[RMDB]
RNA sequence: GGGAACGACUCGAGUAGAGUCGAAAAAGGGUGAAAUCACACCACGUGAUGGGAGUACGACCUGAUAGGGCGCUGCAGAGGCCCACUAUUAGGCUAGUAUAAAAAUCUCUGCUGUACAUGGCACAUGCUGAAUACGUGAGUUCGCUCACGUAUUCAGAAAAGAAACAACAACAACAAC
Reactivity to DMS in 0.01 (KOAc 150mM, MgCl2 10mM, bicine 150mM(pH8.5), 24C), signal-to-noise 2, nucleotides 027 to 126: a090g010g020g010u020g000a110a080a040u010c080a040c030a100c090c100a070c120g030u000g000a030u000g020g000g010a240g000u010a070c050g000a090c040c000u010g000a010u000a030g010g000g010c300g000c000u000g000c150a050g010a050g000g010c010c020c020a090c050u000a010u000u010a030g000g020c100u000a060g020u000a060u000a020a060a110a060a010u010c010u000c050u000g010c010u010g000u000a060c100a090u000g010g010c020a090c160a040u000g010
Reactivity to 2A3 in 0.01 (KOAc 150mM, MgCl2 10mM, bicine 150mM(pH8.5), 24C), signal-to-noise 2, nucleotides 027 to 126: a010g040g000g020u020g090a080a120a070u120c050a030c030a020c100c140a040c070g050u020g020a030u040g020g020g020a060g030u050a010c040g000a090c010c010u050g000a030u000a020g010g000g000c060g000c050u030g020c010a030g020a030g170g000c010c030c020a040c010u010a010u020u050a010g040g040c030u050a030g030u100a080u070a070a120a020a020a060u050c050u000c060u070g010c050u000g010u120a080c080a120u100g040g050c080a040c000a090u150g040
Notes: Structure probing data (DMS and 2A3) for a 177-nucleotide construct. The RNA was probed in 150 mM KOAc, 10 mM MgCl2 and 150 mM bicine (pH 8.5) at 24 C. For 2A3 the reverse transcriptase was SuperScript II with manganese. Reactivities are rounded to 0.1 and cut off at 0 and 3.